[RMDB]
RNA sequence: GGGAACGACUCGAGUAGAGUCGAAAAACUGCAAGAGCGAAUUGGAUAGCUGGAGUUUCGCAUGAUAUUCGUACUCCGUUAUCUAUGGUUAUGGGAUAUGCGGGACAGUUAGAAAAUUCUCUCCAUACUCCGCUCAUUACUUCGGUAAUGAGCGGAGAAAAGAAACAACAACAACAAC
Reactivity to 2A3 in 0.01 (KOAc 150mM, MgCl2 10mM, bicine 150mM(pH8.5), 24C), signal-to-noise 2, nucleotides 027 to 126: a000c040u120g020c060a220a200g000a040g030c010g000a030a030u000u000g060g000a000u010a000g000c000u020g110g100a300g000u100u160u020c000g040c030a010u060g070a030u180a030u150u030c000g060u120a030c030u020c070c000g000u050u160a170u160c040u030a080u130g050g010u040u100a130u160g010g000g000a070u020a000u010g000c000g000g000g000a000c040a090g000u010u000a000g100a040a010a000a000u040u000c000u040c000u000c000c000a000u000a010